[RMDB]
RNA sequence: GGGAACGACUCGAGUAGAGUCGAAAAGAUAUGGACGCCUGCGAAGGGCCAAACAUCGGAAACGAUGUUGGCUGUUGACGCCUGCGUCCUAAGUCAAAACUAGGGUUGUCUUCGGACAACCCUAGAACACAGUCAAAAGGUUCGCCUUUUGACUGUGAAAAGAAACAACAACAACAAC
Reactivity to DMS in 0.01 (KOAc 150mM, MgCl2 10mM, bicine 150mM(pH8.5), 24C), signal-to-noise 1, nucleotides 027 to 126: g020a040u000a030u020g000g040a020c000g020c010c080u010g030c010g020a100a090g030g010g050c000c020a040a060a050c010a000u010c000g010g000a000a010a020c000g000a010u000g010u000u010g000g000c000u000g030u000u000g010a150c000g000c000c010u000g010c020g010u000c000c000u000a000a050g000u010c000a130a090a100a180c000u000a020g000g000g010u000u000g000u000c000u000u010c200g030g000a020c000a010a000c000c010c000u000a000g000a040a220
Reactivity to 2A3 in 0.01 (KOAc 150mM, MgCl2 10mM, bicine 150mM(pH8.5), 24C), signal-to-noise 1, nucleotides 027 to 126: g000a010u000a000u020g010g000a000c010g050c000c090u000g020c080g080a280a300g300g030g010c020c000a110a280a040c010a000u010c000g000g000a000a000a000c000g020a000u000g010u000u010g000g000c020u080g080u230u250g010a020c000g020c000c000u000g010c010g010u000c000c000u010a000a000g010u000c010a000a020a090a190c000u010a010g000g000g000u010u010g030u030c020u060u230c300g010g020a010c000a000a000c000c000c000u000a000g000a010a000
Record summary: Source: RMDB library TTRDEL, as collected in RNAgym. An RNA of 177 nucleotides, treated with DMS and 2A3 and read out base by base. For DMS the reverse transcriptase was MarathonRT. Reactivities are given for positions 27 through 126.